[RMDB]
RNA sequence: GGGAACGACUCGAGUAGAGUCGAAAAUGAUGGGCAUUCGCGCAGUGGCCCUACUUUUGGAGACGUCUAUGGUUUUUCUCGGAACAGGGCUCUAGUUCCGUUGAAGGCGUUUUUUGCCCAAUAUGGCCCCAUAAUCAGUAUUCGUACUGAUUAUGGGAAAAGAAACAACAACAACAAC
Reactivity to 2A3 in 0.01 (KOAc 150mM, MgCl2 10mM, bicine 150mM(pH8.5), 24C), signal-to-noise 7, nucleotides 027 to 126: u100g030a030u060g000g000g010c040a030u080u100c070g000c040g030c210a050g080u050g110g110c010c000c000u020a050c020u020u080u030u050g040g010a020g010a010c010g020u000c040u080a260u160g180g050u100u120u040u180u080c020u010c000g000g000a010a000c010a030g070g130g050c050u050c020u210a040g010u020u000c000c010g000u020u060g030a040a020g010g010c020g000u010u020u010u000u040u080g020c010c000c000a010a020u180a100u080g110g020c010
Reactivity to DMS in 0.01 (KOAc 150mM, MgCl2 10mM, bicine 150mM(pH8.5), 24C), signal-to-noise 9, nucleotides 027 to 126: u010g010a160u000g010g010g020c010a140u010u010c130g010c090g020c070a100g020u010g010g010c010c010c010u000a140c100u000u000u000u010g010g010a040g010a020c050g010u000c030u000a110u010g010g000u010u010u010u000u000c020u000c010g010g000a010a020c020a090g010g020g020c160u010c040u000a080g010u000u000c000c020g000u000u000g010a050a060g010g000c020g000u000u000u000u000u000u000g010c010c000c020a090a090u010a080u010g010g020c100

The data come from the RNA Mapping Database (RMDB), library OK2TST. The record gives the reactivity of an RNA of 177 nucleotides to 2A3 and DMS. For DMS the reverse transcriptase was MarathonRT. Reactivities are given for positions 27 through 126.